Source: RMDB library M2PK90, as collected in RNAgym. The record gives the reactivity of an RNA of 177 nucleotides to DMS and 2A3. DMS adducts were read by reverse transcription with MarathonRT. The reactions ran in a buffer of 150 mM KOAc, 10 mM MgCl2 and 150 mM bicine (pH 8.5), at 24 C. Values cover nucleotides 27 to 126.

RNA sequence: GGGAACGACUCGAGUAGAGUCGAAAAGCAAAGCACAUGAAGCACAUGAAGCACAUGAAGCACAUGAAGCACAUGAAGCACAUGAAGGACAUGAAGCACAUGAAGCACAUGAAGCACAUGAAAAAAAGUAUGGUUUAGGUUUCGACCUAAACCAUACAAAAGAAACAACAACAACAAC
Reactivity to DMS in 0.01 (KOAc 150mM, MgCl2 10mM, bicine 150mM(pH8.5), 24C), signal-to-noise 2, nucleotides 027 to 126: g020c050a040a110a110g010c030a090c060a060u020g010a050a080g010c020a190c060a030u000g010a070a090g020c050a190c010a040u010g000a080a120g000c060a190c050a020u000g010a020a150g000c110a110c010a030u010g050a060a080g030c080a110c010a030u000g000a070a020g050g000a270c060a010u000g010a100a040g050c020a190c030a070u010g010a080a140g040c070a080c030a040u000g010a030a080g000c110a110c010a080u000g000a000a000a010a080a040a070a110
Reactivity to 2A3 in 0.01 (KOAc 150mM, MgCl2 10mM, bicine 150mM(pH8.5), 24C), signal-to-noise 2, nucleotides 027 to 126: g040c030a070a010a020g010c010a020c010a080u050g070a120a020g010c020a020c010a040u050g090a140a010g000c020a030c000a060u040g060a110a020g020c010a020c010a060u030g070a100a010g020c040a010c000a030u100g060a130a020g010c020a010c010a110u080g030a050a050g070g020a020c000a010u040g060a060a020g000c010a030c000a040u040g050a060a020g050c010a000c020a060u030g040a060a000g000c000a010c020a050u080g090a080a070a000a000a000a000a000